[RMDB]
RNA sequence: GGGAACGACUCGAGUAGAGUCGAAAAUUGAGGCGGGUGGGUUGUAAGGGCGGGGGUUCCCUUACAGUACGGGAGCGUGAACAACUGGCUGUUUCCCACCCGCAAGAAUUCGAGGCUAGUUGGCCAAAACUCCCGGGACAUUCGUGUCUCGGGGGUUAAAAGAAACAACAACAACAAC
Reactivity to DMS in 0.01 (KOAc 150mM, MgCl2 10mM, bicine 150mM(pH8.5), 24C), signal-to-noise 4, nucleotides 027 to 126: u030u030g000a150g020g030c010g010g010g030u020g000g030g020u030u020g010u010a000a030g020g010g000c130g000g020g000g020g000u010u000c000c000c010u010u020a020c080a070g000u020a050c100g000g010g000a070g000c040g000u010g010a080a040c060a030a050c030u010g000g000c020u010g000u000u010u010c030c030c020a050c020c020c020g020c020a000a020g000a100a110u030u000c100g000a150g000g020c010u000a060g000u010u000g000g000c050c030a030a040
Reactivity to 2A3 in 0.01 (KOAc 150mM, MgCl2 10mM, bicine 150mM(pH8.5), 24C), signal-to-noise 3, nucleotides 027 to 126: u110u080g090a050g000g040c040g070g150g110u120g030g010g000u080u050g030u040a000a020g020g000g000c050g010g010g010g020g000u050u040c000c000c000u000u030a050c020a020g020u040a010c020g030g000g010a020g020c000g000u030g070a060a000c010a020a000c010u000g090g000c010u020g070u050u080u030c000c000c000a010c020c010c000g010c020a000a000g030a020a060u130u150c050g030a030g000g000c000u020a000g050u040u020g020g000c000c000a030a050